[RMDB]
RNA sequence: GGGAACGACUCGAGUAGAGUCGAAAAUCGGGGAUGAAGAGUUCUUCCGGAUGCUCGGGAGCGAACUUCCAGGAGAGGAGGAAGAACGGAGUAUUCCAUUCAACCGUCACCUCUACAUUCACCUCGAAAUCCGUGCAUAGUUCGCUAUGCACGGAUUAAAAGAAACAACAACAACAAC
Reactivity to 2A3 in 0.01 (KOAc 150mM, MgCl2 10mM, bicine 150mM(pH8.5), 24C), signal-to-noise 2, nucleotides 027 to 126: u000c010g020g030g000g010a100u040g010a020a030g040a030g070u070u000c000u020u000c010c010g030g040a080u200g100c070u070c010g020g020g040a080g080c070g020a020a050c000u080u050c060c010a090g090g020a040g010a010g060g010a030g010g010a070a020g010a080a010c000g010g000a010g000u100a120u250u000c060c040a040u070u090c040a070a070c010c000g040u060c030a050c020c010u000c020u000a030c010a080u010u000c020a030c020c000u000c020g020a050
Reactivity to DMS in 0.01 (KOAc 150mM, MgCl2 10mM, bicine 150mM(pH8.5), 24C), signal-to-noise 3, nucleotides 027 to 126: u000c010g020g000g000g030a150u000g010a060a060g000a120g010u000u000c020u000u030c010c020g010g000a210u020g040c070u000c010g000g000g020a040g010c210g000a020a040c010u020u010c090c150a150g020g010a000g010a040g000g030a290g000g010a040a190g010a010a010c040g000g000a060g020u020a090u010u020c020c030a070u000u010c030a010a300c030c030g000u010c180a120c030c000u000c020u000a070c110a180u000u000c020a040c010c000u010c030g000a060

Structure probing data (2A3 and DMS) for a 177-nucleotide construct.
DMS adducts were read by reverse transcription with MarathonRT.
DMS (dimethyl sulfate) methylates the pairing face of unpaired adenines and cytosines.
The DMS profile rests on 1,762 reads.
The reactions ran in a buffer of 150 mM KOAc, 10 mM MgCl2 and 150 mM bicine (pH 8.5), at 24 C.
It was measured as part of the RMDB library OK2TST.